RNA sequence: GGGAACGACUCGAGUAGAGUCGAAAAGACUUGUGGUUCGCCACAAGUCAAAUAAGCAUGUAGUAAUGGCCAAACUACAUGCAUCGAAAGAAAGGCCAUAAAAAAGGACAUGCUUCGGCAUGUCCAAGGUCCAUAGAGUCUUCGGACUCUAUGGACCAAAAGAAACAACAACAACAAC
Reactivity to 2A3 in 0.01 (KOAc 150mM, MgCl2 10mM, bicine 150mM(pH8.5), 24C), signal-to-noise 1, nucleotides 027 to 126: g000a000c000u000u000g030u010g020g010u070u050c230g070c080c000a000c000a010a000g020u020c010a000a000a000u020a010a020g000c000a000u020g040u010a000g000u010a090a030u000g010g020c000c000a030a030a030c000u020a000c010a010u000g000c000a050u130c040g110a060a100a090g160a080a170a000g010g000c010c000a000u020a000a030a010a000a020a010g000g010a010c000a000u000g000c000u040u060c170g130g000c020a000u000g000u000c000c000a020a000
An RNA of 177 nucleotides, treated with 2A3 and read out base by base. Source: RMDB library M2PK50, as collected in RNAgym. Reactivities are rounded to 0.1 and cut off at 0 and 3. Reactivities are given for positions 27 through 126.